[RMDB]
RNA sequence: GGGAACGACUCGAGUAGAGUCGAAAAGCGCAUUCGUGCGCGGUUGGCCGUAGGGAACGCGUAACAUCCAUACGGGAGACUGCAAAUUCGAAAGAGUUUGAAAGUCAUCGAUCGUAUGGUGGCGUUCCCUAAACGGAGCAAGCCGGUUCGCCGGCAAUAAACGUCAAGUUUUCGAACUUGACGUUUAAAAAGAAACAACAACAACAAC
Reactivity to DMS in 0.01 (KOAc 150mM, MgCl2 10mM, bicine 150mM(pH8.5), 24C), signal-to-noise 2, nucleotides 027 to 156: g060c010g000c000a000u000u000c300g070u000g030c000g040c000g000g000u000u000g000g020c020c010g030u010a050g010g000g000a010a020c010g020c010g020u000a130a050c040a160u010c010c000a070u010a020c010g020g000g010a100g000a030c000u000g000c000a000a020a040u000u000c030g000a170a180a300g000a030g010u020u000u000g000a050a060a020g000u000c020a210u000c190g010a110u020c000g010u020a010u000g010g040u000g020g000c020g010u000u000c000c000c000u000a040a010a030c020g030g000a270g020c080a080a180g020c000c000g030g000u000u000c300g040c020c000g000g010c000a010a050
Structure probing data (DMS) for a 207-nucleotide construct. For DMS the reverse transcriptase was MarathonRT. The reactions ran in a buffer of 150 mM KOAc, 10 mM MgCl2 and 150 mM bicine (pH 8.5), at 24 C. Values are in units of 0.01, from 0 to 300, in steps of 10.